[RMDB]
RNA sequence: GGGAACGACUCGAGUAGAGUCGAAAAGCAGUACGGUUCGCCGUACUGCAAACGCACAUGCAAAACCGGUGGGAAACCAUAAACGGAAAGCCAAGCAUGAAAAAACAGGGACCUUCGGGUCCCUGAACUUAUGCAUUGGGUUCGCCCAAUGCAUAAGAAAAGAAACAACAACAACAAC
Reactivity to 2A3 in 0.01 (KOAc 150mM, MgCl2 10mM, bicine 150mM(pH8.5), 24C), signal-to-noise 2, nucleotides 027 to 126: g020c000a000g000u000a010c000g020g020u010u100c220g050c070c000g000u000a010c000u010g000c000a000a020a000c060g000c020a070c010a080u020g020c000a000a040a060a190c020c010g030g000u010g010g020g000a070a030a030c020c000a030u130a060a230a020c020g010g030a180a020a020g090c050c030a040a030g000c030a030u060g120a110a080a040a010a010a020c020a000g000g010g000a000c030c000u070u140c230g120g010g000u010c000c000c000u000g000a000a000
Reactivity to DMS in 0.01 (KOAc 150mM, MgCl2 10mM, bicine 150mM(pH8.5), 24C), signal-to-noise 2, nucleotides 027 to 126: g000c000a000g020u000a000c020g000g010u010u000c190g020c010c000g010u000a010c000u000g000c000a000a050a040c210g010c130a080c010a010u000g000c030a060a040a140a100c010c000g000g010u010g010g000g000a130a080a190c020c000a020u000a040a100a250c050g000g000a090a040a140g020c050c040a030a120g000c010a020u000g020a000a040a050a060a130a160c000a010g000g000g010a010c020c000u000u020c110g010g010g010u000c000c000c000u000g000a000a040